Chemical mapping of a 207-nucleotide RNA with 2A3 and DMS. DMS adducts were read by reverse transcription with MarathonRT. The data come from the RNA Mapping Database (RMDB), library RNAMAK. The reactions ran in a buffer of 150 mM KOAc, 10 mM MgCl2 and 150 mM bicine (pH 8.5), at 24 C. For 2A3, 7,409 sequencing reads were counted. 2A3 adducts were read by reverse transcription with SuperScript II with manganese.

[RMDB]
RNA sequence: GGGAACGACUCGAGUAGAGUCGAAAACACGACGUUCGCGUCGUGAAAAAAACCUUUGUGAGCUGUAUAGGACAUGAUGUCUGUCUCCCAUUGGGAGACCGACAUCAACAGCCUAUACAGGCUCACUCUGGUAAAAAUCCUCUGUUCGCAGAGGAAACGUAAAUUAGGGAUUCGUCCCUAAUUUACGAAAAGAAACAACAACAACAAC
Reactivity to 2A3 in 0.01 (KOAc 150mM, MgCl2 10mM, bicine 150mM(pH8.5), 24C), signal-to-noise 5, nucleotides 027 to 156: c000a000c000g010a000c000g030u050u090c250g020c020g120u020c000g000u030g020a070a000a000a000a000a000a010c000c010u010u000u010g010u000g010a000g010c040u000g010u000a000u000a010g000g020a050c070a190u060g000a010u000g000u000c000u000g000u000c000u010c000c060c110a300u260u300g000g000g000a000g000a000c010c000g000a000c010a000u000c000a000a010c010a000g010c000c000u000a000u000a000c000a000g010g010c000u000c000a000c000u000c000u000g000g000u070a100a110a010a020a040u010c000c010u000c000u020g030u050u080c270g010c110a000g010a000g000g000a080a010a010
Reactivity to DMS in 0.01 (KOAc 150mM, MgCl2 10mM, bicine 150mM(pH8.5), 24C), signal-to-noise 2, nucleotides 027 to 156: c000a020c000g010a010c000g060u000u010c300g030c030g050u000c000g010u040g010a000a010a040a060a050a090a040c000c010u000u010u000g000u010g020a020g040c000u020g030u000a010u010a020g010g010a050c060a300u000g010a020u010g000u010c000u000g000u000c000u010c000c030c010a300u000u010g040g030g010a010g010a000c010c010g030a000c000a010u000c010a020a020c040a220g000c000c000u010a030u000a010c000a010g010g000c010u000c010a010c000u000c030u000g030g030u000a000a060a060a080a110u000c010c000u000c020u010g020u010u000c300g030c020a010g000a050g020g000a000a010a060